Source: RMDB library RFMREP, as collected in RNAgym. Structure probing data (2A3 and DMS) for a 177-nucleotide construct. The reactions ran in a buffer of 150 mM KOAc, 10 mM MgCl2 and 150 mM bicine (pH 8.5), at 24 C. 2A3 is a SHAPE reagent: it acylates the 2'-hydroxyl of flexible nucleotides of all four kinds. For 2A3, 12,117 sequencing reads were counted.

RNA sequence: GGGAACGACUCGAGUAGAGUCGAAAAUCUAUUGAUACGUCUAUACUCAGUGAAUCACUGAGUUCAUAGAACCUCUUCUACACGUCGACAAGAUUAUUUCUUGUGUUUGCCAGUCAUCGUAUGGUGCCAAUUACCGUAGGUUCGCCUACGGUAAUUGAAAAGAAACAACAACAACAAC
Reactivity to 2A3 in 0.01 (KOAc 150mM, MgCl2 10mM, bicine 150mM(pH8.5), 24C), signal-to-noise 9, nucleotides 027 to 126: u010c010u020a130u080u200g050a040u040a130c060g040u000c020u020a040u030a080c010u010c000a000g010u020g150a300a280u300c030a030c010u000g010a000g000u000u070c020a010u000a010g030a020a020c010c010u030c010u100u040c020u070a060c050a010c100g090u050c040g100a020c010a020a000g010a030u090u070a120u170u300u000c010u010u040g020u010g030u070u090u100g060c030c010a030g030u080c020a040u030c040g060u190a080u240g010g000u010g040c010
Reactivity to DMS in 0.01 (KOAc 150mM, MgCl2 10mM, bicine 150mM(pH8.5), 24C), signal-to-noise 8, nucleotides 027 to 126: u000c030u010a150u010u010g010a070u000a070c210g010u000c030u000a030u000a060c000u000c000a010g010u000g010a200a170u020c050a020c010u000g000a010g000u000u010c150a020u000a010g000a030a140c090c040u000c050u000u000c040u010a050c070a100c100g010u000c070g000a070c020a010a020g010a040u000u010a100u000u000u000c010u000u000g000u000g000u000u010u010g010c020c020a060g010u000c030a030u000c040g010u010a080u010g030g020u000g010c060